[RMDB]
RNA sequence: GGGAACGACUCGAGUAGAGUCGAAAACUGUCUCAGUGUUCAUCCCCUGAUCAAGGAUGCCCGAAACGGUGAGGCGGAAAGCAAAAUAAAUAACGUCAACCCAUCGGGACGGUUGGCCAGUUAAGAAAAAACCGGGGAGUCUUCGGACUCCCCGGAAGUGUCAAUAUACGUUCGCGUAUAUUGACACAAAAGAAACAACAACAACAAC
Reactivity to 2A3 in 0.01 (KOAc 150mM, MgCl2 10mM, bicine 150mM(pH8.5), 24C), signal-to-noise 1, nucleotides 027 to 156: c000u000g080u050c000u010c040a240g270u050g020u080u050c010a020u040c010c000c010c010u060g000a040u050c030a040a040g020g010a000u020g030c000c020c000g030a030a020a040c050g040g000u060g010a050g000g030c040g060g060a110a090a000g070c120a080a050a150a010u230a090a100a040u060a110a000c000g000u010c010a000a000c000c000c000a020u020c010g000g000g040a000c010g030g010u000u010g020g030c000c040a110g040u110u070a140a120g010a050a130a000a030a000a010c010c010g020g000g000g000a010g000u000c040u020u010c070g040g000a040c000u000c000c030c000c000g010g000a000a000

Chemical mapping of a 207-nucleotide RNA with 2A3.
Source: RMDB library M2RFPK, as collected in RNAgym.
Conditions: 150 mM KOAc, 10 mM MgCl2 and 150 mM bicine (pH 8.5), 24 C.
Values cover nucleotides 27 to 156.
2A3 is a SHAPE reagent: it acylates the 2'-hydroxyl of flexible nucleotides of all four kinds.